[RMDB]
RNA sequence: GGGAACGACUCGAGUAGAGUCGAAAAUCAGGACUGUUCGCAGUCCUGAAAACCCAGACCCGAAUCCACCCAUCGUCUCUAGGACGGAACCCAGCCAGGGAAAAAGGAGGGUGUUCGCACCCUCCAACCGUAUAGUUUACUUCGGUAAACUAUACGGAAAAGAAACAACAACAACAAC
Reactivity to DMS in 0.01 (KOAc 150mM, MgCl2 10mM, bicine 150mM(pH8.5), 24C), signal-to-noise 4, nucleotides 027 to 126: u000c000a000g010g010a010c000u010g020u010u010c200g030c010a000g010u010c000c000u000g000a010a020a090a130c010c000c000a110g000a120c050c030c010g000a120a090u010c030c020a050c040c020c020a120u000c040g000u000c010u000c080u010a100g010g020a070c020g000g000a080a090c040c020c000a080g000c030c060a070g000g010g010a040a050a070a110a070g000g010a020g010g000g030u000g020u000u000c150g010c000a010c010c000c000u010c000c000a020a020
Reactivity to 2A3 in 0.01 (KOAc 150mM, MgCl2 10mM, bicine 150mM(pH8.5), 24C), signal-to-noise 3, nucleotides 027 to 126: u020c000a000g000g000a000c000u010g030u050u060c180g000c120a000g000u000c000c000u000g010a000a000a000a000c000c000c000a020g090a060c030c010c020g030a020a060u020c030c010a020c040c020c010a060u080c040g050u010c010u000c030u070a080g070g060a020c010g010g060a050a070c020c000c010a010g060c040c010a040g060g020g000a070a060a030a000a030g000g010a000g000g030g000u000g010u020u040c180g030c040a010c000c000c000u000c000c000a000a000